[RMDB]
RNA sequence: GGGAACGACUCGAGUAGAGUCGAAAAGGAGGGAUUUGAUGAGGUGGAGAGGGCUUUUGUGCACGUCGACUACGAGCGGAGAGUCGAGCCAGAGCACAAGGUGGAUCGGAACUUGCAAAGAAACACCCCCAUAAGAUGCUUUCGAGCAUCUUAUGGGAAAAGAAACAACAACAACAAC
Reactivity to DMS in 0.01 (KOAc 150mM, MgCl2 10mM, bicine 150mM(pH8.5), 24C), signal-to-noise 2, nucleotides 027 to 126: g000g000a160g020g020g000a130u000u010u010g010a050u010g010a150g010g030u010g010g020a180g010a130g010g000g030c070u000u000u000u000g020u000g000c010a160c050g060u010c020g020a030c000u000a050c050g030a120g030c150g030g000a180g020a030g010u010c010g000a050g000c160c040a090g000a070g020c030a020c050a030a030g000g010u000g000g010a080u000c050g020g010a060a070c120u000u000g010c060a060a040a120g000a050a050a160c150a120c180c090
Reactivity to 2A3 in 0.01 (KOAc 150mM, MgCl2 10mM, bicine 150mM(pH8.5), 24C), signal-to-noise 2, nucleotides 027 to 126: g060g030a050g010g090g020a070u050u120u210g100a100u100g010a040g060g040u190g030g070a240g060a090g030g010g030c050u030u070u090u070g010u030g010c030a000c050g050u010c000g030a000c010u080a070c030g120a110g170c060g030g090a280g010a000g070u020c010g000a000g000c030c010a050g000a010g000c020a020c020a010a030g020g000u020g000g060a030u080c000g000g040a020a050c000u030u100g010c130a120a030a030g060a020a070a000c010a060c270c020